[RMDB]
RNA sequence: GGGAACGACUCGAGUAGAGUCGAAAAUUGUGUACGAGUCUCGCUUCACGUGCAUGUGCUGUUCCUUUGCCUUUUCGUGGCCUACAGUCAUAGCUUCCGAUCCCGUGAUAUUUUGAGCACUUGCACCUGGAGGUAUAGUGUUCGCACUAUACCUCCAAAAAGAAACAACAACAACAAC
Reactivity to 2A3 in 0.01 (KOAc 150mM, MgCl2 10mM, bicine 150mM(pH8.5), 24C), signal-to-noise 2, nucleotides 027 to 126: u080u040g070u010g030u050a000c100g030a050g080u040c010u020c040g050c050u040u060c040a030c100g000u040g000c010a020u040g040u030g030c010u000g000u060u060c040c000u020u050u150g070c020c000u030u100u060u090c080g040u070g050g000c010c000u040a060c030a040g000u020c010a060u020a100g020c040u050u000c020c020g090a090u010c000c000c000g050u050g070a060u080a110u160u110u060u110g040a020g000c030a020c010u000u030g020c000a020c000c010
Reactivity to DMS in 0.01 (KOAc 150mM, MgCl2 10mM, bicine 150mM(pH8.5), 24C), signal-to-noise 3, nucleotides 027 to 126: u010u010g030u000g000u010a030c100g010a100g000u000c070u000c070g000c080u000u000c080a070c160g030u000g010c010a030u010g010u000g010c030u000g020u010u000c030c020u000u010u010g000c020c040u000u010u010u000c110g040u010g020g010c050c050u010a060c060a090g020u000c040a070u000a090g010c060u010u000c050c020g000a120u000c020c030c020g000u020g010a070u010a060u000u000u000u000g010a060g010c030a030c020u000u000g000c030a040c050c190
Source: RMDB library OK2TST, as collected in RNAgym. Chemical mapping of a 177-nucleotide RNA with 2A3 and DMS. Reactivities are given for positions 27 through 126. Conditions: 150 mM KOAc, 10 mM MgCl2 and 150 mM bicine (pH 8.5), 24 C. DMS adducts were read by reverse transcription with MarathonRT.